[RMDB]
An RNA of 207 nucleotides, treated with 2A3 and DMS and read out base by base. The DMS profile rests on 1,546 reads.

RNA sequence: GGGAACGACUCGAGUAGAGUCGAAAACUUUGUCAAUACCUUAACACGUGUACGCUGUCUGUACCUGCUAAAAUGCGUGUAAUGCACUUUGGUGCUGGUAGCGAUAAAGGUGUGUGUCCUGGAACAUCUGUCCUAAAACAAUGGUUACCAACCGAUGUGAGUACACAACCUUCGGGUUGUGUACUCAAAAAGAAACAACAACAACAAC
Reactivity to 2A3 in 0.01 (KOAc 150mM, MgCl2 10mM, bicine 150mM(pH8.5), 24C), signal-to-noise 2, nucleotides 027 to 156: c000u000u000u050g020u020c000a030a000u020a060c000c010u050u210a110a000c020a000c050g050u000g070u300a250c000g030c020u110g030u230c030u080g110u000a260c090c000u060g000c010u050a070a000a030a030u050g020c040g010u020g000u180a000a060u130g000c020a010c000u080u200u300g130g000u000g000c000u010g000g000u000a000g000c000g050a070u040a030a000a010g000g000u010g030u040g020u010g010u000c000c000u020g010g040a020a000c000a030u000c050u030g040u000c020c050u090a100a080a000a000c090a040a060u070g010g000u170u130a110c060c000a070a030c000c060g100a020u150g060
Reactivity to DMS in 0.01 (KOAc 150mM, MgCl2 10mM, bicine 150mM(pH8.5), 24C), signal-to-noise 1, nucleotides 027 to 156: c000u000u050u020g000u000c020a090a290u020a010c010c040u000u010a120a070c000a080c040g010u000g010u020a120c010g000c090u000g000u000c020u000g010u010a070c140c060u000g000c060u020a070a010a070a100u000g020c020g030u010g050u020a080a230u000g030c000a020c000u030u020u020g010g040u000g000c020u020g010g080u000a020g000c300g030a050u000a080a060a050g000g020u000g020u020g000u010g000u000c030c000u010g020g010a090a020c050a000u000c010u010g060u000c040c040u000a110a030a110a090c050a100a080u020g000g020u000u000a100c050c000a030a260c050c050g030a160u000g020
The 2A3 profile rests on 676 reads.